[RMDB]
RNA sequence: GGGAACGACUCGAGUAGAGUCGAAAAGGCAAACCGGUGGUGGCGUCGAUGGGUGCGGUCGCCGCCUCCGGUGGCUAUUACGUGUCGAUGGGUGCCGACGCCAUCGUGGCCAACCCGGGCACCAUCACGAUUAAUUAUUAUUCGUAAUAAUUAAUCGAAAAGAAACAACAACAACAAC
Reactivity to 2A3 in 0.01 (KOAc 150mM, MgCl2 10mM, bicine 150mM(pH8.5), 24C), signal-to-noise 9, nucleotides 027 to 126: g050g000c040a130a120a020c010c000g010g000u020g000g010u010g010g000c010g010u010c010g030a110u150g140g090g100u230g070c030g010g060u170c000g000c000c000g010c000c000u000c000c000g000g000u000g000g000c000u030a070u120u210a070c140g060u080g110u190c070g010a040u060g100g030g090u050g010c010c010g030a050c030g000c030c010a100u200c120g090u120g050g000c020c010a030a050c040c000c000g010g030g000c000a000c000c000a030u050c020a010
Reactivity to DMS in 0.01 (KOAc 150mM, MgCl2 10mM, bicine 150mM(pH8.5), 24C), signal-to-noise 9, nucleotides 027 to 126: g010g010c020a060a200a040c010c010g010g010u000g000g030u000g010g010c000g010u000c020g010a110u010g010g020g040u010g020c020g010g000u010c010g020c010c000g010c010c000u000c010c010g000g010u000g000g000c040u000a070u010u010a080c220g010u000g010u000c080g010a040u000g010g010g010u000g020c010c010g010a110c140g000c020c020a100u010c160g010u000g010g010c000c060a070a120c020c020c010g010g010g010c010a030c010c010a040u000c050a250
Notes
An RNA of 177 nucleotides, treated with 2A3 and DMS and read out base by base. It was measured as part of the RMDB library OK2TST. Conditions: 150 mM KOAc, 10 mM MgCl2 and 150 mM bicine (pH 8.5), 24 C. 2A3 adducts were read by reverse transcription with SuperScript II with manganese.